Source information
Chemical mapping of a 207-nucleotide RNA with 2A3. The RNA was probed in 150 mM KOAc, 10 mM MgCl2 and 150 mM bicine (pH 8.5) at 24 C. It was measured as part of the RMDB library M2RFPK.
RNA sequence: GGGAACGACUCGAGUAGAGUCGAAAAGACAGCGCCCAACGCUUCACAACCUGAAAGAAGCGCCUGUUAUCAGGACGGUUGAUCCAUUUACCGGUGCAGACCUCUGCAAACACCGGGUUGCAGAUCAUAGAGGGAAAUUUGUUCGCAAAUUUCCCAACUCAAUGAAAGGCUUCGGCCUUUCAUUGAGAAAAGAAACAACAACAACAAC
Reactivity to 2A3 in 0.01 (KOAc 150mM, MgCl2 10mM, bicine 150mM(pH8.5), 24C), signal-to-noise 1, nucleotides 027 to 156: g070a030c070a080g000c010g040c020c000c000a100a070c030g000c020u070u030c030a090c000a110a020c050c010u060g000a020a000a020g000a000a000g000c000g000c000c010u270g040u300u210a190u300c030a000g000g000a000c010g020g010u020u050g000a030u000c020c010a040u030u030u260a070c000c000g060g000u020g020c000a010g080a260c060c120u180c100u260g050c040a030a080a000c060a040c000c000g000g010g010u010u040g040c070a050g020a130u010c040a000u040a170g140a200g010g000g000a010a000a000u000u000u000g010u010u050c100g030c250a000a000a000u000u000u000c000c000c000a020a000